Structure probing data (DMS and 2A3) for a 170-nucleotide construct.
RNA sequence: GGGAACGACUCGAGUAGAGUCGAAAAGAGUUCCUCUUCUUCCUCCUUGCUGAGGAUCUUUCCUCCCGCGGAGAGCUGCUUCUUCUUGUUCUCGAGGGCCUUCCUUCUGCGGUGAUCCUCCCUCUCCUACGAUAUCGGUUCGCCGAUAUCAAAAGAAACAACAACAACAAC
Reactivity to DMS in 0.01 (KOAc 150mM, MgCl2 10mM, bicine 150mM(pH8.5), 24C), signal-to-noise 9, nucleotides 027 to 129: g010a150g020u000u030c030c000u010c060u020u010c010u030u020c020c030u020c030c020u030u030g020c070u030g010a120g040g000a020u020c050u020u040u000c030c020u030c010c010c020g010c080g030g000a100g010a090g030c120u000g000c030u020u040c020u000u000c070u000u050g000u020u040c020u020c050g000a090g010g000g020c090c060u030u010c040c040u000u010c040u020g030c080g000g070u020g000a090u000c010c010u010c020c010c000u000c010u020c010c020u000a050c140
Reactivity to 2A3 in 0.01 (KOAc 150mM, MgCl2 10mM, bicine 150mM(pH8.5), 24C), signal-to-noise 9, nucleotides 027 to 129: g080a000g020u030u030c010c000u020c010u050u010c010u070u040c010c010u030c010c000u080u130g030c080u060g040a030g020g010a020u010c010u020u080u040c010c020u040c000c010c010g020c040g010g020a040g000a020g030c060u080g030c000u080u070c000u070u020c000u090u190g070u130u040c050u020c030g020a060g010g020g020c000c000u070u070c020c000u050u070c030u060g030c020g020g030u060g030a040u020c000c010u010c010c000c000u020c000u010c000c010u030a060c090